This 207-nucleotide RNA was probed chemically with 2A3 and DMS. Source: RMDB library OK3TST, as collected in RNAgym.

RNA sequence: GGGAACGACUCGAGUAGAGUCGAAAAGCAUGCGAAAGGAUGGUAUUAACAGCAGGUUCUAUUCCAUCCGAAACGUACGUAACUUGUGAGGCAUGCGAAAGGAUGGACGUACGGAAACCAUCCACACCCAUCCGAAACGUACGAUUAAGCCAUCCGAGUUAAUGAUGGUUUUCGAACCAUCAUUAACAAAAGAAACAACAACAACAAC
Reactivity to 2A3 in 0.01 (KOAc 150mM, MgCl2 10mM, bicine 150mM(pH8.5), 24C), signal-to-noise 4, nucleotides 027 to 156: g010c000a010u000g010c040g120a160a040a000g000g000a000u000g010g020u070a060u130u140a080a060c080a060g280c080a080g180g030u060u050c120u120a040u110u000c030c010a020u030c000c020g030a030a030a000c020g040u040a000c030g030u050a110a140c060u140u100g070u100g200a050g140g000c000a000u010g000c000g000a090a020a000g000g000a000u000g000g020a030c070g030u180a030c100g120g020a040a020a000c010c010a020u040c000c020a010c020a020c000c010c000a040u060c040c050g060a090a050a030c000g000u010a000c000g010a030u200u140a040a040g040c050c010a040u020c050c020g030a040
Reactivity to DMS in 0.01 (KOAc 150mM, MgCl2 10mM, bicine 150mM(pH8.5), 24C), signal-to-noise 2, nucleotides 027 to 156: g000c000a030u000g010c000g010a100a130a270g010g020a020u000g020g040u000a060u000u000a030a080c040a220g040c100a150g020g030u010u000c030u000a160u000u000c010c010a040u010c000c000g000a050a030a160c020g000u000a000c040g040u010a080a070c070u010u000g020u000g030a130g010g030c020a050u020g000c040g000a060a100a090g000g010a020u000g000g030a120c050g080u010a100c070g060g000a150a060a200c040c030a070u000c000c030a070c020a050c030c020c020a130u010c060c040g010a070a130a040c000g000u000a010c060g000a190u000u010a110a170g020c090c040a110u000c000c000g000a260

Overview:
The RNA was probed in 150 mM KOAc, 10 mM MgCl2 and 150 mM bicine (pH 8.5) at 24 C. For DMS the reverse transcriptase was MarathonRT.